[RMDB]
RNA sequence: GGGAACGACUCGAGUAGAGUCGAAAAGAUAUGGAUCCUGACAGCGCGACAACCAUCGGAAACGAUGGCUAAUCGAACUACGCUGGAGGGAUCCUAAGUCAAAGAUGUGUCGUUCGCGACACAUCAAGUCACAAACAAGGUUCGCCUUGUUUGUGACAAAAGAAACAACAACAACAAC
Reactivity to DMS in 0.01 (KOAc 150mM, MgCl2 10mM, bicine 150mM(pH8.5), 24C), signal-to-noise 3, nucleotides 027 to 126: g020a020u000a300u000g000g030a010u000c000c000u000g000a300c010a000g000c000g010c070g000a050c090a110a200c000c000a010u000c000g020g040a130a090a240c000g000a010u000g000g010c030u000a080a270u000c030g000a100a020c110u000a210c000g000c000u000g000g000a300g000g000g000a020u000c000c000u000a010a050g000u010c070a070a100a040g000a000u000g000u000g020u000c000g030u010u000c160g010c000g040a000c000a000c000a010u000c000a010a070
Reactivity to 2A3 in 0.01 (KOAc 150mM, MgCl2 10mM, bicine 150mM(pH8.5), 24C), signal-to-noise 3, nucleotides 027 to 126: g030a000u050a030u110g000g000a000u010c010c010u030g020a020c000a000g000c070g030c010g100a020c030a060a000c000c000a000u010c000g020g030a060a020a030c000g010a010u000g040g000c000u050a020a030u010c010g040a090a080c140u250a060c300g000c000u010g010g000a030g020g000g010a000u030c000c000u010a010a000g000u000c040a100a060a090g000a000u000g010u000g000u000c020g030u070u100c300g020c030g140a000c000a000c000a000u010c010a000a000